[RMDB]
RNA sequence: GGGAACGACUCGAGUAGAGUCGAAAAGAUAUGGAUCAGACUCCUUCUUCUCCCUGGACAUGCUACCACAUCGGAAACGAUGUGAGUAGCAACAGCCAGUGGAGAAGAAGGAGUCUGAUCCUAAGUCCAACAACCAAUGGUUCGCCAUUGGUUGUUGAAAAGAAACAACAACAACAAC
Reactivity to DMS in 0.01 (KOAc 150mM, MgCl2 10mM, bicine 150mM(pH8.5), 24C), signal-to-noise 2, nucleotides 027 to 126: g000a110u020a300u000g000g010a000u010c000a020g010a020c000u000c000c010u000u000c000u000u020c000u000c000c010c000u000g000g000a070c180a300u010g030c000u000a010c010c000a010c000a020u000c000g000g000a150a120a300c010g030a000u000g030u000g010a060g040u000a010g020c000a000a030c300a240g020c030c000a000g000u010g020g000a000g000a000a000g000a000a000g000g020a000g000u000c000u000g000a000u000c000c000u020a020a060g010u010c060
Structure probing data (DMS) for a 177-nucleotide construct. For DMS the reverse transcriptase was MarathonRT.